RNA sequence: GGGAACGACUCGAGUAGAGUCGAAAAUAUGUCCAGUACAGGGCCAGAGGUCAACUAUUUCUGAGAAACUUACCUAUACUAGCCACCAAAGUCAAGCUGCUUCUAGUUGGAAACCUGGGGGCCGAGGCAGUCCAGUAUGGUUCGCCAUACUGGACUGAAAAGAAACAACAACAACAAC
Reactivity to DMS in 0.01 (KOAc 150mM, MgCl2 10mM, bicine 150mM(pH8.5), 24C), signal-to-noise 2, nucleotides 027 to 126: u090a050u000g020u000c030c050a060g000u030a060c100a060g010g000g040c020c040a070g000a090g000g000u030c090a020a130c090u000a090u010u000u000c060u000g000a080g010a060a120a060c130u020u030a050c050c000u000a060u020a080c050u000a070g010c000c020a080c100c060a020a030a090g000u000c030a080a090g040c030u000g000c050u000u020c050u010a010g000u000u030g000g020a120a070a090c080c050u000g010g000g000g000g000c030c010g000a060g000g020
Reactivity to 2A3 in 0.01 (KOAc 150mM, MgCl2 10mM, bicine 150mM(pH8.5), 24C), signal-to-noise 4, nucleotides 027 to 126: u300a060u100g050u040c010c000a020g020u060a080c030a070g020g000g030c020c020a050g040a010g030g070u140c050a090a010c050u060a140u070u100u030c050u050g030a040g060a170a100a040c020u060u020a030c030c020u030a040u060a100c020u040a040g060c010c040a050c000c020a120a070a020g040u060c070a080a020g020c060u070g010c010u090u020c020u060a040g050u050u040g030g060a080a090a030c010c000u020g000g000g000g000g050c000c000g010a040g080g010

An RNA of 177 nucleotides, treated with DMS and 2A3 and read out base by base. For DMS, 2,676 sequencing reads were counted. The RNA was probed in 150 mM KOAc, 10 mM MgCl2 and 150 mM bicine (pH 8.5) at 24 C.